[RMDB]
RNA sequence: GGGAACGACUCGAGUAGAGUCGAAAAGUGGCCGCCUGGCCUCUGACACGAGGCUGGCCGGGGAUGGCGCCCGAAGCUUUUCACCCAAGCCCAUGUGAAGCAACAAUCAAGGUAGUUGCAGUUUUAUACCUUCUAUACGAUUCGUCGUAUAGAAGGUAAAAGAAACAACAACAACAAC
Reactivity to 2A3 in 0.01 (KOAc 150mM, MgCl2 10mM, bicine 150mM(pH8.5), 24C), signal-to-noise 6, nucleotides 027 to 126: g050u040g020g040c020c010g040c020c020u050g050g000c030c000u000c010u050g130a040c010a030c240g010a010g020g000c030u030g030g000c020c000g010g000g010g020a100u100g030g010c020g060c010c010c020g020a060a010g010c010u040u040u050u090c040a080c000c000c000a030a030g030c020c000c010a050u090g080u050g120a160a020g010c010a010a030c000a010a060u190c080a110a080g140g030u090a050g060u070u010g000c030a010g000u010u010u030u000a100u020
Reactivity to DMS in 0.01 (KOAc 150mM, MgCl2 10mM, bicine 150mM(pH8.5), 24C), signal-to-noise 6, nucleotides 027 to 126: g010u020g000g000c030c020g010c250c030u020g000g000c010c000u000c010u000g010a140c270a130c230g010a020g000g000c010u000g000g010c110c020g000g010g000g000a070u020g010g000c040g030c040c040c050g010a120a170g000c010u000u000u010u020c070a090c010c030c020a090a140g010c030c030c020a070u010g010u010g010a110a110g000c020a020a010c030a090a070u020c120a100a140g010g010u010a070g000u010u000g000c020a130g000u010u010u010u010a120u010

Chemical mapping of a 177-nucleotide RNA with 2A3 and DMS.
The reactions ran in a buffer of 150 mM KOAc, 10 mM MgCl2 and 150 mM bicine (pH 8.5), at 24 C.